[RMDB]
RNA sequence: GGGAACGACUCGAGUAGAGUCGAAAACGCUGGCACUGACCGCAUGCGCGGGCAGCGACGACAAGGGCGAACCCGACGACGGCGGGGACCGGGGCGCAUCCUUGGCCACCACCAGCGAUGCGGACUGACGAGUCCGCGUGUUCGCACGCGGACUCGUAAAAGAAACAACAACAACAAC
Reactivity to 2A3 in 0.01 (KOAc 150mM, MgCl2 10mM, bicine 150mM(pH8.5), 24C), signal-to-noise 1, nucleotides 027 to 126: c040g010c000u040g090g080c020a070c180u110g050a100c000c050g040c000a170u300g100c180g000c020g080g060g000c000a040g000c060g040a080c040g020a000c030a020a000g000g110g000c050g050a120a130c000c000c020g000a010c010g000a000c010g000g190c010g000g020g110g070a000c050c040g000g000g000g000c020g000c000a110u090c000c000u040u010g090g000c060c010a050c030c000a000c000c000a050g010c010g000a000u060g020c080g000g140a030c030u000g040